[RMDB]
Structure probing data (DMS and 2A3) for a 177-nucleotide construct. For 2A3, 1,610 sequencing reads were counted. The reactions ran in a buffer of 150 mM KOAc, 10 mM MgCl2 and 150 mM bicine (pH 8.5), at 24 C.

RNA sequence: GGGAACGACUCGAGUAGAGUCGAAAACACAAGCAUUUUAUAAGUUAUUUUCGCGACGUGCGCGAGCGCCUUCGAUACGGGUAUUGGGGCUGGUAUUCCUGCACGAACGCGUCGCAUUGCGCGUUGGAACUAGGAGACCAUUCGUGGUCUCCUAGUUAAAAGAAACAACAACAACAAC
Reactivity to DMS in 0.01 (KOAc 150mM, MgCl2 10mM, bicine 150mM(pH8.5), 24C), signal-to-noise 3, nucleotides 027 to 126: c060a100c160a090a170g000c070a040u010u000u010u020a130u000a120a120g010u010u000a130u000u000u010u000c050g040c010g010a050c070g010u000g000c080g040c120g000a060g010c040g010c030c050u000u000c030g010a070u000a150c120g000g020g020u000a100u000u000g020g010g000g020c030u020g010g000u000a110u000u010c020c000u000g010c030a070c040g000a020a010c120g000c000g020u000c050g010c060a120u010u010g020c010g000c030g010u000u010g000g000
Reactivity to 2A3 in 0.01 (KOAc 150mM, MgCl2 10mM, bicine 150mM(pH8.5), 24C), signal-to-noise 2, nucleotides 027 to 126: c060a010c020a010a050g080c060a120u110u170u080u160a260u190a210a140g060u110u060a190u150u130u040u070c100g010c020g010a050c010g000u030g000c020g000c010g020a080g080c010g040c010c020u100u160c020g050a060u050a150c040g050g090g000u010a060u050u090g100g000g010g000c000u020g010g000u060a070u050u140c000c000u020g010c090a000c020g030a000a000c000g020c020g020u020c000g000c020a040u050u240g000c020g000c010g010u010u040g030g010